[RMDB]
RNA sequence: GGGAACGACUCGAGUAGAGUCGAAAAGGGUGCAAGAUCUAAAAUAGGAAGACAGGUUAUGAGGCUGUUGGAUCCCCAUUAUAAUGGCAGCUUGGAUGAGAUAGGUUUCAUGAAAAUGGGAAAAAGCAGACAUGUGUGGGAUGUUUUAGGCAGCUGAUAGUAUCGAUGCUUUCGAGCAUCGAUACUAAAAAGAAACAACAACAACAAC
Reactivity to DMS in 0.01 (KOAc 150mM, MgCl2 10mM, bicine 150mM(pH8.5), 24C), signal-to-noise 1, nucleotides 027 to 156: g010g070g010u010g020c040a060a110g020a100u000c070u000a040a060a080a110u000a110g020g020a110a050g000a140c050a090g000g060u000u000a040u000g030a100g040g040c020u000g040u000u010g000g000a110u000c020c010c000c040a090u010u010a190u000a120a080u000g000g030c080a070g010c020u000u020g000g020a080u010g000a120g010a100u000a050g020g020u000u000u000c030a120u000g010a100a060a070a090u000g010g040g000a100a020a010a090a040g010c040a120g000a090c030a030u000g020u020g020u010g010g000g050a070u020g010u000u000u000u000a100g010g000c020a050g010c030u000g010a130
Reactivity to 2A3 in 0.01 (KOAc 150mM, MgCl2 10mM, bicine 150mM(pH8.5), 24C), signal-to-noise 2, nucleotides 027 to 156: g040g000g020u030g000c020a020a030g000a070u040c030u160a020a100a080a140u180a040g060g010a050a030g080a050c030a030g040g010u090u100a060u150g050a070g030g030c000u010g000u040u000g010g030a080u100c030c000c000c000a020u020u070a080u090a080a080u100g060g000c010a020g010c080u100u070g040g040a040u050g030a060g000a070u060a000g010g080u010u010u100c030a010u030g080a040a020a020a060u030g030g050g000a000a130a000a000a000g020c040a000g010a030c010a060u070g020u000g030u040g030g010g000a000u010g050u000u030u000u030a020g000g000c010a000g000c020u060g040a050
Description: This 207-nucleotide RNA was probed chemically with DMS and 2A3. For 2A3, 826 sequencing reads were counted. Conditions: 150 mM KOAc, 10 mM MgCl2 and 150 mM bicine (pH 8.5), 24 C. DMS adducts were read by reverse transcription with MarathonRT. 2A3 adducts were read by reverse transcription with SuperScript II with manganese. The data come from the RNA Mapping Database (RMDB), library OK3TST.